An RNA of 177 nucleotides, treated with DMS and 2A3 and read out base by base. The 2A3 profile rests on 5,663 reads. Values cover nucleotides 27 to 126. 2A3 adducts were read by reverse transcription with SuperScript II with manganese.
RNA sequence: GGGAACGACUCGAGUAGAGUCGAAAAGAAAAUGGCCAUCAGCUGGCGCCUCAAAGUUCAGCAAAACACAUGCUUUUAGUCUGCGCCUCUGAAUAUACGGGCGAUUCCGCUCUCAGCCUGUCCGAGAGAGUAAGGAGCAUUUCGAUGCUCCUUACUCAAAAGAAACAACAACAACAAC
Reactivity to DMS in 0.01 (KOAc 150mM, MgCl2 10mM, bicine 150mM(pH8.5), 24C), signal-to-noise 3, nucleotides 027 to 126: g000a060a020a050a030u000g050g000c020c120a130u010c040a040g040c090u010g000g020c040g010c000c000u010c160a070a040a070g000u020u030c130a050g000c140a080a100a130a110c230a080c110a140u020g010c050u010u000u010u030a030g000u010c090u050g010c050g000c010c000u010c030u000g010a050a030u030a040u040a050c110g010g000g020c010g010a070u060u040c080c050g010c010u010c050u000c140a090g000c040c020u000g000u000c020c000g010a140g030a180
Reactivity to 2A3 in 0.01 (KOAc 150mM, MgCl2 10mM, bicine 150mM(pH8.5), 24C), signal-to-noise 6, nucleotides 027 to 126: g130a000a130a010a040u150g040g000c070c040a080u040c030a050g030c110u040g020g000c000g020c010c000u080c060a030a030a010g020u110u070c030a080g000c090a080a040a120a030c130a020c030a070u110g040c040u010u080u030u040a030g020u030c140u130g020c000g010c000c010u020c020u020g010a060a010u100a000u020a140c080g010g020g000c030g110a140u140u030c050c020g010c020u010c000u000c010a020g000c020c000u020g040u040c020c050g050a070g010a010